[RMDB]
RNA sequence: GGGAACGACUCGAGUAGAGUCGAAAAAGUGUGAAUUAACACACAUGCAAACAAGUGUAAGGCGUAGCAAUACGACCGAUGCCGGAGCAGGACAGUAUGACAACGUGCCACUGAUCAUGUGCCUAAGAUCUCAAGGUAGCGAUUCGUCGCUACCUAAGGAGCUCGACAUAUUCGUAUGUCGAGCUCCAAAAGAAACAACAACAACAAC
Reactivity to 2A3 in 0.01 (KOAc 150mM, MgCl2 10mM, bicine 150mM(pH8.5), 24C), signal-to-noise 1, nucleotides 027 to 156: a000g090u110g000u060g020a110a250u190u120a110a010c000a010c000a000c000a000u100g040c000a010a160a260c040a010a090g030u070g000u140a240a000g000g020c020g000u000a000g000c060a080a080u000a000c000g140a100c010c010g000a020u070g000c000c080g020g000a000g120c000a050g020g040a000c000a000g070u120a000u180g040a000c030a040a000c110g050u060g050c000c030a000c010u030g010a080u000c020a040u050g000u070g000c000c000u110a050a030g000a080u260c140u150c280a000a000g000g010u000a000g000c000g000a000u000u020c150g020u000c000g140c030u000a000c000c000u000a000a000